[RMDB]
RNA sequence: GGGAACGACUCGAGUAGAGUCGAAAAGAAACGCAAGGCCGCUGACCGACGGGAUAUUGUGGGGCUUACCACAGGGGACGCGGCGUUAUCACUUGCCUUUUAAGCCGACCGUCUGGCCUGCAUACAAACCACCCAACUAUCUUCGGAUAGUUGGGAAGGAAUGCUAUUUCUUCGGAAAUAGCAUUCCAAAAGAAACAACAACAACAAC
Reactivity to DMS in 0.01 (KOAc 150mM, MgCl2 10mM, bicine 150mM(pH8.5), 24C), signal-to-noise 1, nucleotides 027 to 156: g000a110a030a100c020g020c030a040a130g050g000c040c030g000c000u000g010a150c050c000g000a080c000g020g000g050a140u010a090u000u000g020u000g070g020g060g000c130u010u000a070c050c020a050c030a060g050g040g000g000a150c110g000c060g010g070c090g040u020u000a080u010c060a110c020u000u000g030c010c050u000u000u000u000a080a130g030c030c030g000a030c020c010g000u010c020u030g040g000c020c020u000g000c060a120u010a050c090a070a070a140c090c010a220c020c010c000a010a010c000u000a010u000c000u000u010c300g070g040a050u000a000g010u000u010g000g000g000a000a020
Reactivity to 2A3 in 0.01 (KOAc 150mM, MgCl2 10mM, bicine 150mM(pH8.5), 24C), signal-to-noise 3, nucleotides 027 to 156: g010a000a040a000c110g010c060a080a050g080g010c000c010g020c190u140g050a040c040c090g030a040c000g000g030g040a070u090a070u170u090g020u030g000g000g030g130c130u100u150a050c000c000a010c010a040g050g000g000g050a010c060g020c050g070g000c000g000u020u040a020u040c010a030c130u050u140g020c010c040u070u250u060u110a030a010g010c020c010g010a040c020c000g000u030c020u060g000g000c010c020u010g020c000a020u080a080c060a010a100a010c020c000a010c030c000c000a000a010c000u000a000u010c000u030u020c150g030g000a000u010a000g000u000u000g000g010g000a000a000
Notes
The data come from the RNA Mapping Database (RMDB), library M2RFPK. An RNA of 207 nucleotides, treated with DMS and 2A3 and read out base by base. 2A3 is a SHAPE reagent: it acylates the 2'-hydroxyl of flexible nucleotides of all four kinds. For 2A3 the reverse transcriptase was SuperScript II with manganese. The reactions ran in a buffer of 150 mM KOAc, 10 mM MgCl2 and 150 mM bicine (pH 8.5), at 24 C. The DMS profile rests on 1,966 reads.